[RMDB]
RNA sequence: GGGAACGACUCGAGUAGAGUCGAAAACUCGUUUUUCACGUUUUUGCCCGGCCGCAGGACAUGUGCGGCGGCGUUAACGUUGACUGGUGACAGACCACGUGCGCGAGGCGGACGACGCGAACAUCGACAACGAAUCUUCAUUCGUGAAGAUUCGUUGAAAAGAAACAACAACAACAAC
Reactivity to 2A3 in 0.01 (KOAc 150mM, MgCl2 10mM, bicine 150mM(pH8.5), 24C), signal-to-noise 4, nucleotides 027 to 126: c010u010c020g010u030u010u000u130u090c050a010c020g000u000u000u010u080u130g040c040c030c000g150g070c010c000g010c010a030g080g160a250c090a240u300g040u010g060c010g020g000c000g010g000c010g010u040u090a050a010c000g000u040u090g040a060c010u020g000g040u060g040a050c000a030g040a070c030c000a020c030g040u030g010c020g000c020g050a080g030g000c000g000g010a040c040g020a020c000g010c010g020a010a020c010a080u080c030g060a040
Reactivity to DMS in 0.01 (KOAc 150mM, MgCl2 10mM, bicine 150mM(pH8.5), 24C), signal-to-noise 4, nucleotides 027 to 126: c050u010c030g010u000u010u000u000u000c050a040c020g000u010u000u000u020u010g010c010c020c120g030g010c010c010g010c010a040g010g010a130c290a110u010g000u010g010c000g000g030c000g010g010c000g010u000u000a060a010c020g010u000u010g000a160c130u000g000g000u020g010a190c070a060g000a130c060c030a050c060g030u000g010c050g020c030g010a110g010g010c020g000g000a040c140g000a030c050g030c040g000a040a050c110a050u000c100g010a180